[RMDB]
RNA sequence: GGGAACGACUCGAGUAGAGUCGAAAAGUGAAGGACAAUGUCAGUUUCGUUGCUGAUGAUUCAGGUACUCCCGUUGUUGAGUAUCUGUCUAAAGAAGACCUACAUACAUUGUAUGUAGACCCUAAGUUACCACCGGGGUUCGCCCCGGUGAAAAGAAACAACAACAACAAC
Reactivity to DMS in 0.01 (KOAc 150mM, MgCl2 10mM, bicine 150mM(pH8.5), 24C), signal-to-noise 4, nucleotides 027 to 129: g020u030g000a000a000g100g000a020c130a130a170u110g020u000c010a070g000u000u010u040c230g050u000u000g060c050u150g050a050u000g030a060u000u070c020a010g030g060u030a030c030u010c000c060c170g010u020u010g000u100u120g030a000g000u030a100u000c010u000g030u040c020u030a090a060a060g030a110a030g050a040c090c030u020a020c000a160u040a000c070a230u030u130g020u030a010u020g010u000a020g020a100c050c000c060u080a030a160g030u030u040a080c000
Reactivity to 2A3 in 0.01 (KOAc 150mM, MgCl2 10mM, bicine 150mM(pH8.5), 24C), signal-to-noise 3, nucleotides 027 to 129: g070u110g050a060a010g140g090a000c060a070a130u170g000u000c010a000g000u030u060u280c200g040u120u180g060c010u000g000a000u030g010a000u020u010c000a000g020g020u020a000c000u000c040c000c040g000u000u000g000u000u040g000a000g010u000a000u000c000u000g020u000c030u080a080a000a000g060a040a000g050a050c010c000u020a000c000a000u020a000c030a210u110u300g010u030a000u000g000u000a010g000a040c000c000c020u050a120a030g090u140u110a070c030
The record gives the reactivity of an RNA of 170 nucleotides to DMS and 2A3. Conditions: 150 mM KOAc, 10 mM MgCl2 and 150 mM bicine (pH 8.5), 24 C.